[RMDB]
RNA sequence: GGGAACGACUCGAGUAGAGUCGAAAAACGUGGCUCACUCUACGGAGUGAGCCACGAAGAAUGAUGAGACGUGUUCCUCUCUCCUACAGACCUCCUGGGGAUGCUAUGUACACCUUACUGAUUUAAAUCUUCAGAAUAUAUUCGUAUAUUCUGAAGAAAAAGAAACAACAACAACAAC
Reactivity to DMS in 0.01 (KOAc 150mM, MgCl2 10mM, bicine 150mM(pH8.5), 24C), signal-to-noise 7, nucleotides 027 to 126: a070c010g060u000g010g030c010u000c000a030c000u000c010u020a150c200g020g020a040g020u010g020a010g030c020c000a010c000g010a010a030g010a090a060u020g010a090u020g000a080g010a060c080g010u000g010u000u010c030c010u000c050u010c040u000c010c010u000a100c100a080g000a120c090c060u010c030c030u000g010g000g000g000a070u000g000c040u000a050u010g000u010a070c080a050c030c040u010u010a080c100u010g010a120u020u010u010a060a080a120
Reactivity to 2A3 in 0.01 (KOAc 150mM, MgCl2 10mM, bicine 150mM(pH8.5), 24C), signal-to-noise 9, nucleotides 027 to 126: a010c010g000u000g000g000c010u000c010a020c000u000c010u020a080c300g060g000a000g000u010g000a010g010c000c000a000c000g000a000a000g030a020a060u190g080a040u090g020a010g030a060c070g040u030g030u080u030c000c000u000c000u000c000u000c000c010u050a130c030a090g060a210c010c030u080c010c010u050g000g000g010g030a020u050g010c020u080a050u170g050u050a020c020a050c040c020u110u140a100c050u100g130a200u080u060u220a060a150a080
Structure probing data (DMS and 2A3) for a 177-nucleotide construct. DMS adducts were read by reverse transcription with MarathonRT. In probing experiments dimethyl sulfate is read out at A N1 and C N3, which are open when not base-paired. The data come from the RNA Mapping Database (RMDB), libraries RFM100 and RFMREP.